[RMDB]
RNA sequence: GGGAACGACUCGAGUAGAGUCGAAAACGCCAGUUCGCUGUAUUCAGAGGAGACUGCCAAAGUGUUUCGCGCUGAACAAGCUGAAGUAGAACGACAAAACACCCAAAUGGCAACGGUUUUCGCCUCACCUCGGAUUAUAGUUCGCUAUAAUCCGAGGAAAAGAAACAACAACAACAAC
Reactivity to 2A3 in 0.01 (KOAc 150mM, MgCl2 10mM, bicine 150mM(pH8.5), 24C), signal-to-noise 2, nucleotides 027 to 126: c060g030c040c040a030g030u050u040c020g000c010u030g010u130a230u080u100c020a010g000a030g020g030a020g040a030c040u060g080c050c020a090a070a040g090u090g030u020u060u070c050g000c000g000c020u000g010a050a020c020a120a060g050c060u070g030a070a000g040u100a060g040a160a030c040g120a020c040a030a030a000a000c040a020c000c010c040a040a100a070u130g020g000c020a000a050c030g060g020u030u050u050u070c050g010c010c000u030c010a040
Reactivity to DMS in 0.01 (KOAc 150mM, MgCl2 10mM, bicine 150mM(pH8.5), 24C), signal-to-noise 2, nucleotides 027 to 126: c170g010c100c030a020g020u000u000c100g020c000u000g030u000a110u020u000c080a040g020a110g000g000a090g000a040c090u000g010c070c070a060a130a110g020u010g000u000u000u000c050g020c090g010c000u000g010a070a070c150a130a060g020c040u000g010a050a070g000u000a060g010a080a130c090g000a090c110a070a060a050a070c030a080c000c060c030a080a080a090u000g020g010c020a040a150c150g000g000u010u000u000u000c100g000c000c020u000c170a230

An RNA of 177 nucleotides, treated with 2A3 and DMS and read out base by base. The DMS profile rests on 1,241 reads. DMS adducts were read by reverse transcription with MarathonRT. It was measured as part of the RMDB library OK2TST.